[RMDB]
RNA sequence: GGGAACGACUCGAGUAGAGUCGAAAAAGUCAAAGGCUGUGCUAUGGCCAGGACACAGGGGACUCUAGCCAGCAUGCCCUAAUAGAAGUGGGGCCUUGUGCUACCCAGUCAAUGAGUGGCCCUCCUCGUUAUAUGCAUCCUUCGGGAUGCAUAUAACAAAAGAAACAACAACAACAAC
Reactivity to 2A3 in 0.01 (KOAc 150mM, MgCl2 10mM, bicine 150mM(pH8.5), 24C), signal-to-noise 3, nucleotides 027 to 126: a010g080u070c060a150a030a010g060g010c030u040g030u120g110c020u080a080u170g020g000c010c030a040g030g020a030c030a020c030a140g010g000g040g040a070c020u010c020u090a020g010c010c000a000g000c020a020u090g040c000c000c020u120a190a120u140a140g300a300a040g060u100g010g000g000g000c000c010u100u140g080u110g000c010u030a080c030c010c020a030g090u050c020a010a150u130g040a050g100u070g020g010c000c000c000u030c010c010u040c020
Reactivity to DMS in 0.01 (KOAc 150mM, MgCl2 10mM, bicine 150mM(pH8.5), 24C), signal-to-noise 4, nucleotides 027 to 126: a060g010u010c070a070a120a140g020g000c020u000g010u010g020c030u000a060u010g000g010c010c020a110g010g010a090c040a040c090a080g000g020g000g000a120c050u000c120u000a020g010c020c030a040g010c120a080u000g010c020c000c000u000a070a130u010a140g010a110a140g000u010g000g000g000g020c020c140u000u000g010u000g010c000u000a070c030c020c020a090g000u010c160a050a120u000g000a080g010u000g000g000c020c010c020u000c040c010u000c190

Annotation:
Chemical mapping of a 177-nucleotide RNA with 2A3 and DMS. In probing experiments dimethyl sulfate is read out at A N1 and C N3, which are open when not base-paired. The 2A3 profile rests on 3,191 reads. Source: RMDB library OK2TRN, as collected in RNAgym. For DMS the reverse transcriptase was MarathonRT. The RNA was probed in 150 mM KOAc, 10 mM MgCl2 and 150 mM bicine (pH 8.5) at 24 C.